[RMDB]
RNA sequence: GGGAACGACUCGAGUAGAGUCGAAAAUUUAAUCCCAACAAAGGGCCAAGAGGGACGGCAACUUGGCCCAAGCCCAAAGAGCGUGACUCUAAAGGGAUGAGUCGUUCCCAACUCGCUCACAAUAUAACAUACGUUCUUAUUUCGAUAAGAACGUAUGAAAAGAAACAACAACAACAAC
Reactivity to DMS in 0.01 (KOAc 150mM, MgCl2 10mM, bicine 150mM(pH8.5), 24C), signal-to-noise 4, nucleotides 027 to 126: u010u010u000a120a140u000c000c000c000a110a150c220a060a120a090g020g000g000c000c000a010a020g000a140g000g010g010a050c070g010g010c040a180a100c000u010u010g000g000c000c000c000a040a040g000c010c010c020a070a140a060g010a070g010c040g020u000g000a060c010u000c000u010a010a120a120g000g000g010a070u000g000a010g000u000c000g010u000u000c000c000c010a030a020c080u000c070g010c050u010c040a070c130a070a060u010a080u000a110a160
Reactivity to 2A3 in 0.01 (KOAc 150mM, MgCl2 10mM, bicine 150mM(pH8.5), 24C), signal-to-noise 3, nucleotides 027 to 126: u000u000u040a060a040u030c010c010c000a000a010c010a010a070a030g000g000g000c000c000a010a000g000a040g070g060g070a070c020g050g010c010a040a040c000u010u000g010g000c000c000c040a000a000g010c000c000c000a090a090a020g040a010g030c110g100u130g070a130c000u010c010u050a050a060a060g050g000g010a020u100g000a000g000u000c000g000u000u000c000c010c010a010a010c010u020c020g040c010u070c010a070c050a090a090u160a050u060a290a020